[RMDB]
The data come from the RNA Mapping Database (RMDB), library M2PK50.
Chemical mapping of a 177-nucleotide RNA with DMS and 2A3.
For DMS, 1,563 sequencing reads were counted.
For DMS the reverse transcriptase was MarathonRT.
The RNA was probed in 150 mM KOAc, 10 mM MgCl2 and 150 mM bicine (pH 8.5) at 24 C.
Reactivities are given for positions 27 through 126.
RNA sequence: GGGAACGACUCGAGUAGAGUCGAAAACAUAGGGAGUUCGCUCCCUAUGAAAAUGCCGGCUGCAAGAAAAGUGCUUCAAAGAGUGGGAGCUCUGCCGAAAAAAAAGGGCGAUGUUCGCAUCGCCCAAGCUUUACUAUGAGUUCGCUCAUAGUAAAGCAAAAGAAACAACAACAACAAC
Reactivity to DMS in 0.01 (KOAc 150mM, MgCl2 10mM, bicine 150mM(pH8.5), 24C), signal-to-noise 2, nucleotides 027 to 126: c000a010u000a000g000g000g010a010g030u000u030c230g000c000u000c000c000c000u000a000u000g000a040a070a070a090u000g020c100c000g000g010c020u010g040c070a050a100g010a090a060a080a080g010u010g000c020u010u010c040a070a090a090g000a060g010u010g000g020g000a120g000c050u000c090u000g000c040c010g010a010a000a010a080a040a050a150a120g000g030g000c000g000a020u000g000u000u020c250g000c010a000u000c000g010c000c000c010a010a020
Reactivity to 2A3 in 0.01 (KOAc 150mM, MgCl2 10mM, bicine 150mM(pH8.5), 24C), signal-to-noise 3, nucleotides 027 to 126: c000a000u000a010g000g000g010a010g000u050u060c090g050c040u000c000c010c000u000a000u000g000a010a010a000a010u060g050c030c000g030g020c030u050g020c070a080a050g070a120a190a040a030g070u050g020c010u030u050c050a130a150a050g060a080g060u120g030g030g000a020g010c010u000c030u050g030c020c020g040a090a010a000a000a000a000a010a050g020g000g030c000g010a000u000g030u040u060c210g020c100a010u000c010g000c000c000c000a000a000